[RMDB]
RNA sequence: GGGAACGACUCGAGUAGAGUCGAAAACUCCUUUAAAUAAGGUGAUUACUUCAUUUGCUACAAUGAUUGCUGCAUCCCUUUGAGCUUCUUUGGUUGAUGCUGCAAUGUGAGGGGUACAGACGAUAUACAGCAUGACCCAUUUCGAUGGGUCAUGCUGAAAAGAAACAACAACAACAAC
Reactivity to DMS in 0.01 (KOAc 150mM, MgCl2 10mM, bicine 150mM(pH8.5), 24C), signal-to-noise 1, nucleotides 027 to 126: c280u000c020c000u000u000u000a000a110a020u070a100a060g070g000u060g020a090u060u020a250c120u000u000c010a020u000u000u000g050c140u000a020c290a010a050u020g000a000u020u000g010c030u020g050c020a000u040c020c000c000u000u000u020g000a040g020c300u030u000c000u000u000u000g000g000u120u010g000a040u000g000c000u000g000c000a010a000u000g040u000g020a120g000g000g000g000u000a160c060a130g060a100c130g000a090u040a020u090a170
Reactivity to 2A3 in 0.01 (KOAc 150mM, MgCl2 10mM, bicine 150mM(pH8.5), 24C), signal-to-noise 2, nucleotides 027 to 126: c000u030c040c000u130u090u100a220a240a210u230a050a040g100g000u030g060a040u010u190a060c000u060u060c060a210u190u100u110g020c010u060a010c090a010a110u220g000a030u080u010g000c000u010g000c000a000u010c000c000c000u000u010u050g080a100g040c040u140u090c010u070u150u080g010g010u040u300g000a000u000g000c000u000g080c020a020a010u150g060u060g000a030g030g000g020g010u030a000c000a020g160a030c000g040a030u040a000u040a270
The record gives the reactivity of an RNA of 177 nucleotides to DMS and 2A3. The RNA was probed in 150 mM KOAc, 10 mM MgCl2 and 150 mM bicine (pH 8.5) at 24 C. Values cover nucleotides 27 to 126. DMS adducts were read by reverse transcription with MarathonRT.